[RMDB]
RNA sequence: GGGAACGACUCGAGUAGAGUCGAAAACAGGGAGAGGUUGGAGUAAUGAUGAGCUUACCACAUUGAUCAUUCCAUCAAAGUGGGUACAUAUUUACCAGGAAGGUGACUUUACUGCUAUUUGCAAGAAUGUUAAGCUUGCUGUGGGGUAUUCACUGGACAUCCAUAGGCACUUCGGUGCCUAUGGAUGAAAAGAAACAACAACAACAAC
Reactivity to DMS in 0.01 (KOAc 150mM, MgCl2 10mM, bicine 150mM(pH8.5), 24C), signal-to-noise 1, nucleotides 027 to 156: c050a070g020g040g030a120g010a040g030g010u010u000g000g040a110g000u000a050a080u000g010a100u010g030a090g070c110u000u000a050c010c020a080c020a170u000u010g010a020u000c000a210u010u000c170c070a080u000c000a010a040a100g050u000g010g040g000u030a100c050a080u000a050u010u000u000a080c050c040a060g010g000a100a130g030g030u000g010a070c030u020u000u000a050c040u020g030c070u000a080u010u000u010g040c040a030a050g010a100a080u000g020u020u000a130a160g030c030u010u010g030c000u010g010u000g010g010g000g010u010a080u000u000c110a140c020u000g010g010a300
Reactivity to 2A3 in 0.01 (KOAc 150mM, MgCl2 10mM, bicine 150mM(pH8.5), 24C), signal-to-noise 3, nucleotides 027 to 156: c060a010g000g000g020a010g010a040g020g060u040u060g020g010a050g040u070a150a030u080g060a040u030g010a010g050c020u050u120a030c030c000a010c030a040u030u010g000a020u040c040a150u160u140c110c030a020u020c000a020a000a040g000u010g020g000g030u070a020c030a020u090a060u150u110u090a120c040c000a010g050g010a020a020g060g020u040g060a040c040u090u060u100a060c010u010g150c000u100a080u120u090u090g000c000a030a020g040a080a060u090g040u140u110a080a020g010c020u020u030g020c030u010g040u050g000g030g010g000u020a060u060u070c070a070c060u010g060g010a020
The record gives the reactivity of an RNA of 207 nucleotides to DMS and 2A3. The 2A3 profile rests on 1,211 reads. For 2A3 the reverse transcriptase was SuperScript II with manganese. The DMS profile rests on 1,965 reads. It was measured as part of the RMDB library OK3TST.